[RMDB]
RNA sequence: GGGAACGACUCGAGUAGAGUCGAAAAGAUCGGAAACAGCAGCAGGUGAGUCCGCCUUUUGUGAAGGAUCGGCUGAAACACGAGGAAAUACUGAGCCAACGCAAGACGGUAGCCGAACAGUAGCAACAAAACGCUUACGUGUUCGCACGUAAGCGAAGGUAUGACGUAGCUUCGGCUACGUCAUACCAAAAGAAACAACAACAACAAC
Reactivity to 2A3 in 0.01 (KOAc 150mM, MgCl2 10mM, bicine 150mM(pH8.5), 24C), signal-to-noise 1, nucleotides 027 to 156: g000a060u100c040g030g020a130a000a000c050a050g030c000a000g000c050a020g000g000u010g020a020g010u050c010c030g040c030c010u080u080u060u060g170u030g010a040a020g050g010a080u050c060g000g000c000u030g040a170a020a000c050a000c060g040a020g040g120a020a060a080u110a060c030u040g020a000g020c000c020a050a000c040g000c070a010a010g040a000c070g000g000u000a000g000c020c000g010a000a010c000a020g100u090a000g020c050a030a170c000a060a060a030a010c070g000c000u000u000a000c000g000u000g060u070u060c090g030c050a010c000g020u000a000a000g000c000g000a000a000